Description
The record gives the reactivity of an RNA of 177 nucleotides to DMS and 2A3. Reactivities are given for positions 27 through 126.
[RMDB]
RNA sequence: GGGAACGACUCGAGUAGAGUCGAAAACAUCGUCAUCAGGUAGUGCUUGGCCGAUGAGCUCUGCGGGAACCAACGCGAACAGGGUAGGGGGAGCAUCCCAACCUUCUGCGUGGAUGAAGUCAACGGCCUGUCCGGAAGUAUUCGUACUUCCGGACAGAAAAGAAACAACAACAACAAC
Reactivity to DMS in 0.01 (KOAc 150mM, MgCl2 10mM, bicine 150mM(pH8.5), 24C), signal-to-noise 2, nucleotides 027 to 126: c080a070u010c090g000u010c060a070u000c080a040g010g010u000a040g010u020g000c090u000u010g000g010c000c010g020a090u000g020a070g000c040u000c030u000g000c040g010g000g000a110a160c060c030a070a040c040g010c020g000a070a060c140a080g000g010g000u000a050g010g020g000g000g010a110g030c220a140u000c000c000c000a050a080c020c010u000u000c070u000g000c040g010u010g000g000a060u020g000a040a090g000u000c070a020a090c050g010g000c000
Reactivity to 2A3 in 0.01 (KOAc 150mM, MgCl2 10mM, bicine 150mM(pH8.5), 24C), signal-to-noise 2, nucleotides 027 to 126: c020a120u090c030g080u070c010a090u020c030a050g040g120u070a010g030u030g050c030u060u050g010g030c000c020g080a120u050g000a000g060c010u030c010u040g010c040g060g030g030a040a040c020c010a070a070c070g050c000g040a080a060c040a080g020g000g110u070a080g050g010g000g020g040a160g060c030a070u080c000c000c000a000a050c000c000u050u040c050u120g020c020g020u000g040g000a070u070g010a050a000g100u050c020a040a030c020g040g000c000